[RMDB]
RNA sequence: GGGAACGACUCGAGUAGAGUCGAAAAGCCCGCGAUUCGUCGCGGGCAAAAAUCCUAAGUCCAACAGCGUUGAAAGACUUCUAUGAAGUAUCGGAAACGAUAUGGAGAAGGGGAGACGACAUGGAUAUGGAAAAAAACUCGGCGUUCGCGCCGAGAACUUUGUAAAUAACUUCGGUUAUUUACAAAGAAAAGAAACAACAACAACAAC
Reactivity to 2A3 in 0.01 (KOAc 150mM, MgCl2 10mM, bicine 150mM(pH8.5), 24C), signal-to-noise 1, nucleotides 027 to 156: g030c020c000c020g000c010g000a000u050u000c100g010u000c000g040c020g020g000g020c030a040a040a000a000a000u040c040c000u050a100a020g010u000c020c000a060a020c050a130g090c020g030u060u080g140a220a080a030g100a110c000u000u000c010u040a300u040g020a010a000g000u000a010u000c010g000g040a000a080a000c000g010a000u000a010u050g040g000a020g000a000a010g000g010g000g010a160g000a050c010g020a050c020a130u060g010g000a020u060a080u170g000g060a070a030a050a040a130a010a020c010u040c050g000g000c010g040u080u050c240g030c020g000c110c000g010a000g000a020a010